[RMDB]
RNA sequence: GGGAACGACUCGAGUAGAGUCGAAAAGUUGCAGGGCGGUGUCGUUGCGAAAGCAAUGGCCGAGCAUCUGCAUCGUCUGUACCUUGCCUCGUCCGGCACCGUCGCGGAACCGGCAUCGCCGACGCGACAUCAAGCCACCGCACCUGCUGGUGGUGCACCGGAGUACUCAAUUCGUUGAGUACUCCGGAAAAGAAACAACAACAACAAC
Reactivity to 2A3 in 0.01 (KOAc 150mM, MgCl2 10mM, bicine 150mM(pH8.5), 24C), signal-to-noise 2, nucleotides 027 to 156: g010u010u030g000c030a020g000g010g020c000g060g000u240g040u180c000g010u000u000g020c000g000a080a040a040g000c030a070a110u090g130g000c020c000g040a040g050c010a110u030c000u040g000c010a000u000c000g030u050c030u060g070u060a030c000c000u000u100g000c020c030u040c090g180u040c020c140g000g020c080a050c180c200g000u010c000g020c000g000g030a000a190c060c010g000g000c010a260u170c230g050c030c030g060a210c000g000c000g060a010c000a030u190c070a050a030g000c000c000a020c000c000g030c080a180c060c140u250g010c140u150g000g030u000g020g000u030g010c000a020
Notes: Conditions: 150 mM KOAc, 10 mM MgCl2 and 150 mM bicine (pH 8.5), 24 C. This 207-nucleotide RNA was probed chemically with 2A3. It was measured as part of the RMDB library OK3TST. The 2A3 profile rests on 693 reads. For 2A3 the reverse transcriptase was SuperScript II with manganese. Values cover nucleotides 27 to 156.